RNA sequence: GGGAACGACUCGAGUAGAGUCGAAAAGCUUGAAAAUGCGCAGAACCAGCAGGAAAAGAAUGAACAAGACUUAUUGUCAUUGGACAAGUGGGCAAGCCUGUGGAAUUGGUUUGACAUAACAAAAUGGAGUAAUGGUACCUUUCGAGGUACCAUUACUAAAAGAAACAACAACAACAAC
Reactivity to DMS in 0.01 (KOAc 150mM, MgCl2 10mM, bicine 150mM(pH8.5), 24C), signal-to-noise 4, nucleotides 027 to 126: g030c030u010u010g010a080a070a070a070u010g000c040g030c030a080g010a060a060c030c030a090g030c010a020g000g000a080a040a110a090g000a090a050u000g020a100a100c070a040a050g010a090c070u010u060a110u020u020g000u010c000a110u020u000g010g010a110c080a050a030g010u030g020g000g000c110a080a090g010c000c010u000g000u000g010g010a050a090u040u020g000g000u010u010u010g000a060c090a020u030a060a060c100a040a040a050a120u020g000g000
Reactivity to 2A3 in 0.01 (KOAc 150mM, MgCl2 10mM, bicine 150mM(pH8.5), 24C), signal-to-noise 3, nucleotides 027 to 126: g000c000u020u040g060a110a000a070a020u150g100c100g000c070a000g010a100a030c010c000a000g010c020a040g000g030a030a040a000a000g110a040a130u160g020a090a000c040a080a000g060a070c060u200u160a040u150u190g000u000c090a150u020u120g090g010a040c000a030a010g140u050g010g060g070c070a020a040g010c000c000u040g000u060g070g050a070a150u300u010g000g020u000u000u000g010a010c000a060u090a190a060c080a060a000a040a170u300g120g000
Chemical mapping of a 177-nucleotide RNA with DMS and 2A3. For 2A3, 2,024 sequencing reads were counted. For 2A3 the reverse transcriptase was SuperScript II with manganese. The reactions ran in a buffer of 150 mM KOAc, 10 mM MgCl2 and 150 mM bicine (pH 8.5), at 24 C.